RNA sequence: GGGAACGACUCGAGUAGAGUCGAAAAUCGCUGGAUUUGUAUAGCCAGUGUGCCGCGAUGCCAUUGUUGGCCAUCGCUUCCAUCUCUUCGGUACGAAUCUGUAUUUCAAUUGGCACGCCGUGCAUACCACCCAGGGAUAUUUCGAUAUCCCUGGGUGAAAAGAAACAACAACAACAAC
Reactivity to DMS in 0.01 (KOAc 150mM, MgCl2 10mM, bicine 150mM(pH8.5), 24C), signal-to-noise 3, nucleotides 027 to 126: u010c050g020c040u000g000g000a080u000u010u000g010u020a060u010a140g030c010c020a020g000u000g020u000g010c120c030g020c010g010a020u000g010c000c020a090u020u020g000u030u010g010g000c140c060a000u000c000g010c000u010u000c030c020a140u010c080u010c050u000u000c090g000g020u000a060c080g010a050a060u010c060u010g000u010a040u010u010u000c110a080a110u000u000g000g000c020a070c050g020c030c040g010u000g020c040a090u010a050c120
Reactivity to 2A3 in 0.01 (KOAc 150mM, MgCl2 10mM, bicine 150mM(pH8.5), 24C), signal-to-noise 4, nucleotides 027 to 126: u050c020g030c040u030g010g020a100u080u140u140g150u100a090u150a100g050c010c000a010g000u010g010u010g000c020c020g000c010g020a010u010g000c000c030a080u170u260g160u210u160g080g050c110c010a020u010c000g010c000u020u000c030c010a120u050c070u000c030u140u170c050g060g010u040a030c030g030a090a090u040c080u120g090u090a140u020u130u060c110a130a110u090u050g030g010c030a000c050g120c070c050g020u020g000c000a040u030a090c000
Structure probing data (DMS and 2A3) for a 177-nucleotide construct.
The DMS profile rests on 4,210 reads.
Values cover nucleotides 27 to 126.
The reactions ran in a buffer of 150 mM KOAc, 10 mM MgCl2 and 150 mM bicine (pH 8.5), at 24 C.
It was measured as part of the RMDB library OK2TST.
For 2A3 the reverse transcriptase was SuperScript II with manganese.